[RMDB]
RNA sequence: GGGAACGACUCGAGUAGAGUCGAAAAGGAUUUUUCUUCGGAAAAAUCCAAACCCGAUGAAGCGGCACUUAGACACCUUCAUACACCUAAGAGUGCAAAUAAAAACCGUUCAGUUCGCUGAACGGAACCUUUGUAAAAUCUUCGGAUUUUACAAAGGAAAAGAAACAACAACAACAAC
Reactivity to DMS in 0.01 (KOAc 150mM, MgCl2 10mM, bicine 150mM(pH8.5), 24C), signal-to-noise 1, nucleotides 027 to 126: g020g000a000u000u000u000u000u000c000u010u000c160g010g000a000a000a020a000a000u020c000c000a010a170a120c000c030c000g010a080u010g000a070a080g000c250g010g000c060a010c060u010u010a070g010a110c110a030c160c010u000u000c050a010u010a110c090a060c060c090u030a070a070g000a050g000u000g000c030a050a070a070u010a060a080a080a080a130c000c000g000u000u000c000a010g030u010u010c240g000c000u000g000a000a020c000g000g010a010a020
Reactivity to 2A3 in 0.01 (KOAc 150mM, MgCl2 10mM, bicine 150mM(pH8.5), 24C), signal-to-noise 1, nucleotides 027 to 126: g010g000a030u010u020u030u040u060c040u060u080c190g040g000a010a000a000a010a000u030c030c010a000a010a070c000c000c000g000a120u070g030a030a020g040c080g040g030c040a010c050u110u120a030g100a100c060a030c040c000u030u060c030a050u100a090c050a060c010c040u050a120a000g080a040g110u050g000c050a010a170a020u170a030a050a020a000a030c000c000g000u000u020c010a010g010u040u100c160g000c060u000g000a000a000c000g010g000a000a000
Source: RMDB library M2PK50, as collected in RNAgym.
Structure probing data (DMS and 2A3) for a 177-nucleotide construct.
Values cover nucleotides 27 to 126.
The reactions ran in a buffer of 150 mM KOAc, 10 mM MgCl2 and 150 mM bicine (pH 8.5), at 24 C.
2A3 adducts were read by reverse transcription with SuperScript II with manganese.
The 2A3 profile rests on 1,271 reads.